This 207-nucleotide RNA was probed chemically with 2A3 and DMS. It was measured as part of the RMDB library M2RFPK. For DMS the reverse transcriptase was MarathonRT. The DMS profile rests on 5,821 reads. 2A3 adducts were read by reverse transcription with SuperScript II with manganese.

RNA sequence: GGGAACGACUCGAGUAGAGUCGAAAAUACCGUCUUCUCCCCGACGGUUUCAAUCCAUAUCUUCACGUUGUGUAGCGUAGGUGGAAGGUAUCGUGUGGUGUAUAAACACCACAUAGUCUCUUAGGGGUCAAGCUGAUAAACUUCGGUUUAUCAGCAACUUUCACACGAUAUUCGUAUCGUGUGAAAGAAAAGAAACAACAACAACAAC
Reactivity to 2A3 in 0.01 (KOAc 150mM, MgCl2 10mM, bicine 150mM(pH8.5), 24C), signal-to-noise 6, nucleotides 027 to 156: u080a010c010c000g020u020c020u160u040c040u090c000c000c000c000g000a010c010g000g000u000u030u080c060a030a050u000c020c010a020u030a070u030c060u130u140c060a030c050g120u110u100g150u140g170u300a040g040c040g040u030a040g040g050u040g030g030a030a040g050g020u060a040u120c060g010u000g000u000g010g010u000g030u020a120u110a280a170a020c000a000c000c010a000c000a000u010a010g020u000c020u000c010u110u160a030g020g010g000g020u050c050a060a050g000c000u000g000a000u000a000a000a000c000u020u050c160g070g000u000u000u000a000u000c000a000g000c000a000a010
Reactivity to DMS in 0.01 (KOAc 150mM, MgCl2 10mM, bicine 150mM(pH8.5), 24C), signal-to-noise 2, nucleotides 027 to 156: u000a050c000c000g010u000c010u000u000c040u000c000c000c010c120g010a030c010g020g000u000u010u010c070a090a090u000c020c010a080u000a060u000c050u000u000c060a070c060g040u000u000g010u010g010u000a090g000c040g030u010a080g010g030u010g010g020a060a050g030g020u000a060u000c040g030u010g040u010g010g050u010g020u000a140u010a210a140a130c010a010c050c000a010c010a000u000a040g020u000c030u000c020u000u000a280g010g000g010g000u000c040a090a130g000c000u000g010a000u000a000a000a010c000u010u010c240g050g030u000u000u010a010u000c000a010g020c020a000a010